The data come from the RNA Mapping Database (RMDB), library RFM100. This 177-nucleotide RNA was probed chemically with 2A3. For 2A3, 484 sequencing reads were counted.

RNA sequence: GGGAACGACUCGAGUAGAGUCGAAAAAGCUGGCGUACGCGCCAGCAGACUUGGUCUAAGCUCCUCAGUGUCAUGUGAACAAACCUGAGGAGUUUAGAGCAAGUAAAACGCGUCAUACGUGACGCGAUAGGUUGUCGAGGUUCGCCUCGACAACCUAAAAAGAAACAACAACAACAAC
Reactivity to 2A3 in 0.01 (KOAc 150mM, MgCl2 10mM, bicine 150mM(pH8.5), 24C), signal-to-noise 1, nucleotides 027 to 126: a000g000c000u000g000g000c000g030u090a090c240g000c010g200c050c000a000g000c000a000g030a000c000u010u060g090g000u080c000u000a000a000g000c000u000c110c000u000c000a020g050u030g010u190c100a090u130g090u130g030a120a120c060a050a300a000c000c000u000g060a000g000g000a040g000u000u000u000a000g000a000g000c000a000a000g000u010a000a050a060a060c020g000c010g000u000c000a000u020a100c270g110u130g000a000c000g000c000g000a020